[RMDB]
An RNA of 177 nucleotides, treated with 2A3 and DMS and read out base by base.
RNA sequence: GGGAACGACUCGAGUAGAGUCGAAAAUGCACCCCAGCGAGGAGCGGAGGCGGCAGCAGAGGAUAGCAGAGAUCACCGAGAUGAUCCAUGUGGCAAGCCUGCUGCAUGAUGACGUCAUCGACAAUGCGUGCAUGAUGAUGUUCGCAUCAUCAUGCACAAAAGAAACAACAACAACAAC
Reactivity to 2A3 in 0.01 (KOAc 150mM, MgCl2 10mM, bicine 150mM(pH8.5), 24C), signal-to-noise 1, nucleotides 027 to 126: u090g000c010a110c000c020c000c030a000g020c030g010a050g080g030a100g030c000g000g000a030g060g000c020g010g070c000a000g010c000a050g070a000g030g020a070u070a040g100c030a000g060a000g000a080u130c030a020c080c060g160a080g010a180u000g020a030u020c000c020a040u050g040u030g020g000c020a000a080g230c030c070u060g010c010u000g000c010a040u040g010a040u050g070a040c000g000u030c010a030u050c040g040a060c090a130a070u140g090c040
Reactivity to DMS in 0.01 (KOAc 150mM, MgCl2 10mM, bicine 150mM(pH8.5), 24C), signal-to-noise 2, nucleotides 027 to 126: u010g000c110a180c050c000c020c020a170g020c020g040a110g000g010a070g040c080g000g010a110g020g000c080g020g010c060a020g000c030a030g010a060g000g000a080u020a090g010c040a080g010a210g000a050u000c010a080c040c020g010a170g010a110u000g000a030u000c030c050a090u000g030u000g000g000c010a050a170g030c250c120u010g000c010u000g020c000a000u000g010a090u000g030a110c100g010u000c020a080u000c000g000a110c200a070a100u000g000c140
Conditions: 150 mM KOAc, 10 mM MgCl2 and 150 mM bicine (pH 8.5), 24 C. Reactivities are given for positions 27 through 126. For 2A3 the reverse transcriptase was SuperScript II with manganese. The data come from the RNA Mapping Database (RMDB), library OK2TRN.